RNA sequence: GGGAACGACUCGAGUAGAGUCGAAAAUGAGGGGUUAUGCCCUCGGCGGACUGCUCAGUAACACGUGGAUAACCUGCCCAAGGGUCUGGGAUAACCCCGGGAAACUGGGGAUAAUACCGGAUGGAUCGCGAGAGAACACGUUCGCGUGUUCUCUCGCAAAAGAAACAACAACAACAAC
Reactivity to 2A3 in 0.01 (KOAc 150mM, MgCl2 10mM, bicine 150mM(pH8.5), 24C), signal-to-noise 1, nucleotides 027 to 126: u160g000a120g130g000g000g020u300u170a010u260g140c040c000c000u030c040g040g010c030g020g040a130c000u000g000c000u060c080a000g030u040a090a040c090a000c040g000u000g030g030a110u060a300a000c000c000u090g000c000c000c030a000a030g030g000g000u000c000u000g000g020g020a040u030a000a000c000c000c000c000g000g000g030a000a070a000c040u000g000g000g000g000a000u060a100a000u020a050c000c000g070g000a000u050g160g000a090u190c060
The record gives the reactivity of an RNA of 177 nucleotides to 2A3. It was measured as part of the RMDB library RFM100. For 2A3 the reverse transcriptase was SuperScript II with manganese. Reactivities are given for positions 27 through 126.